[RMDB]
The record gives the reactivity of an RNA of 177 nucleotides to DMS and 2A3. The 2A3 profile rests on 714 reads. The reactions ran in a buffer of 150 mM KOAc, 10 mM MgCl2 and 150 mM bicine (pH 8.5), at 24 C. It was measured as part of the RMDB library M2PK90. Reactivities are rounded to 0.1 and cut off at 0 and 3.

RNA sequence: GGGAACGACUCGAGUAGAGUCGAAAAUAAAAUCAAAAUAAGACAGGUAAUGUCUGAGAAUAGAAUGGAUUGGAAUUUGUCCUAUUGGCACUGGUUAACCGUAAUUACCACCACCAAAAUAAAAAAAGUCAGUAAUAACGUUCGCGUUAUUACUGACAAAAGAAACAACAACAACAAC
Reactivity to DMS in 0.01 (KOAc 150mM, MgCl2 10mM, bicine 150mM(pH8.5), 24C), signal-to-noise 1, nucleotides 027 to 126: u000a110a160a080a050u030c020a030a120a120a140u010a070a040g020a030c030a030g000g050u000a110a080u000g000u000c000u000g000a110g000a080a100u020a040g000a050a130u020g010g000a070u010u000g030g030a060a110u020u000u000g030u000c020c010u000a050u000u010g010g020c100a030c170u000g000g000u000u000a050a110c140c080g010u000a050a110u000u000a030c010c000a020c300c070a060c010c010a040a030a110a100u060a030a020a060a070a060a030a080
Reactivity to 2A3 in 0.01 (KOAc 150mM, MgCl2 10mM, bicine 150mM(pH8.5), 24C), signal-to-noise 1, nucleotides 027 to 126: u090a000a100a000a030u010c020a040a060a010a160u100a100a000g010a000c000a000g250g080u260a180a020u050g000u000c000u000g000a020g010a060a110u200a230g140a080a030u080g090g030a060u060u000g080g030a040a140u070u010u170g060u000c030c000u050a190u010u060g070g000c020a000c010u010g000g030u060u060a010a140c100c000g040u010a040a130u010u030a000c000c030a000c000c000a010c030c000a030a020a160a050u270a050a070a040a010a000a000a000